[RMDB]
RNA sequence: GGGAACGACUCGAGUAGAGUCGAAAAGAGAAUCCUCCGAGUCCUCAGACGCGCCUGUCCUCCCUGCUUGAGGGGUUGGGCGCGCAGCUGAGUGCUGCGCUUCGUGCUCCGGUCUGGAGAAACGGUGACGAUCAGCGAUAUUCGUAUCGCUGAUCGUAAAAGAAACAACAACAACAAC
Reactivity to 2A3 in 0.01 (KOAc 150mM, MgCl2 10mM, bicine 150mM(pH8.5), 24C), signal-to-noise 3, nucleotides 027 to 126: g150a020g040a060a090u060c020c010u040c040c030g020a010g000u000c010c000u000c000a000g000a050c010g000c000g000c020c000u070g000u060c010c020u030c010c010c030u210g140c230u300u260g100a120g020g020g010g040u130u100g050g000g000c000g000c010g000c000a000g000c000u020g040a030g090u110g000c000u000g000c010g010c010u050u080c050g040u020g020c000u020c010c010g270g070u050c090u080g020g000a010g010a030a060a000c000g030g070u070g050
Reactivity to DMS in 0.01 (KOAc 150mM, MgCl2 10mM, bicine 150mM(pH8.5), 24C), signal-to-noise 1, nucleotides 027 to 126: g000a200g030a090a100u010c020c000u000c010c080g000a060g030u010c050c050u000c030a000g010a180c020g010c170g000c010c000u030g000u020c010c030u000c000c010c030u020g010c300u060u020g020a040g000g010g000g010u020u000g000g030g000c000g000c040g010c070a030g010c010u010g000a070g040u030g010c000u000g000c000g010c090u000u000c000g030u020g050c010u000c040c050g020g020u000c070u050g000g010a030g010a030a070a020c080g000g000u040g000
The record gives the reactivity of an RNA of 177 nucleotides to 2A3 and DMS.
For DMS, 2,128 sequencing reads were counted.
DMS adducts were read by reverse transcription with MarathonRT.
2A3 adducts were read by reverse transcription with SuperScript II with manganese.
High 2A3 reactivity points to a flexible backbone, as in loops and unpaired stretches.
Reactivities are given for positions 27 through 126.
It was measured as part of the RMDB library OK1LIB.